Structure probing data (2A3 and DMS) for a 177-nucleotide construct.
DMS adducts were read by reverse transcription with MarathonRT.
In probing experiments dimethyl sulfate is read out at A N1 and C N3, which are open when not base-paired.
For 2A3 the reverse transcriptase was SuperScript II with manganese.
The reactions ran in a buffer of 150 mM KOAc, 10 mM MgCl2 and 150 mM bicine (pH 8.5), at 24 C.
Reactivities are given for positions 27 through 126.
[RMDB]
RNA sequence: GGGAACGACUCGAGUAGAGUCGAAAAAGACUGAGCUACGGCUCAGUCAAUAAGUGAUGAGAUUUAUUUCAUGUGUUUCAGAUGAUUACAUCCUGAUUAUAACCUAUGACGAAAAUUGACUGAUUAACUGUGGGAAAUUGUUCGCAAUUUCCCACAGAAAAGAAACAACAACAACAAC
Reactivity to 2A3 in 0.01 (KOAc 150mM, MgCl2 10mM, bicine 150mM(pH8.5), 24C), signal-to-noise 3, nucleotides 027 to 126: a010g000a000c000u020g000a000g000c010u030a050c300g020g000c040u010c000a020g000u000c000a000a000u080a040a010g200u120g050a040u060g050a020g010a110u000u110u090a130u070u160u000c010a020u080g040u010g040u060u030u060c010a000g000a040u020g020a050u050u050a060c020a000u010c020c020u030g040a030u130u210a090u060a070a000c030c020u050a080u090g060a040c120g060a100a100a080a040u150u110g050a090c020u060g040a150u130u050a060a030
Reactivity to DMS in 0.01 (KOAc 150mM, MgCl2 10mM, bicine 150mM(pH8.5), 24C), signal-to-noise 1, nucleotides 027 to 126: a120g000a000c000u020g020a040g000c010u000a080c130g040g000c000u000c000a050g030u010c000a050a020u010a010a140g000u030g010a060u000g050a170g000a110u020u010u010a020u020u020u000c020a040u000g040u020g030u010u000u040c050a040g000a020u020g010a130u010u010a100c050a060u000c100c090u010g010a020u020u010a070u090a040a030c110c040u000a040u030g000a100c130g000a020a010a020a040u000u000g000a070c100u010g020a130u000u070a030a070